This 177-nucleotide RNA was probed chemically with 2A3 and DMS.
The RNA was probed in 150 mM KOAc, 10 mM MgCl2 and 150 mM bicine (pH 8.5) at 24 C.
As a SHAPE reagent, 2A3 marks flexible, mostly unpaired nucleotides at the ribose 2'-OH.
It was measured as part of the RMDB library M2PK50.
RNA sequence: GGGAACGACUCGAGUAGAGUCGAAAACCCAAAGCGUUCGCGCUUUGGGAAAGAAUAAACGAGCGAAAAGAUUGAUGUGGACGCUCGUAAAAACCACAUCAAAAAGUCAACGGUUCGCCGUUGACAACAAGUGUAUGUACUUCGGUACAUACACUUGAAAAGAAACAACAACAACAAC
Reactivity to 2A3 in 0.01 (KOAc 150mM, MgCl2 10mM, bicine 150mM(pH8.5), 24C), signal-to-noise 5, nucleotides 027 to 126: c000c000c000a000a010a000g010c010g040u050u120c210g010c010g000c090u010u000u010g000g000g020a070a080a020g070a040a050u210a160a120a030c030g000a000g010c050g100a130a080a060a070g110a090u080u120g000a010u020g000u020g010g020a030c080g000c020u000c020g010u030a010a030a010a020a000c000c000a000c000a010u000c010a010a020a030a030a010g000u010c000a000a000c000g000g050u020u070c190g030c060c000g000u000u000g000a000c000a000a020
Reactivity to DMS in 0.01 (KOAc 150mM, MgCl2 10mM, bicine 150mM(pH8.5), 24C), signal-to-noise 4, nucleotides 027 to 126: c010c000c000a000a010a010g010c000g010u000u000c240g010c010g020c000u000u010u010g000g000g010a010a040a070g010a160a080u010a060a080a110c050g020a010g000c000g020a100a110a150a090g000a160u010u000g020a030u000g020u000g000g010a230c080g000c010u000c010g000u000a030a030a070a090a050c010c000a000c030a000u000c000a080a050a100a070a090g000u000c010a000a010c010g000g000u010u010c230g020c000c000g030u010u000g000a000c020a070a090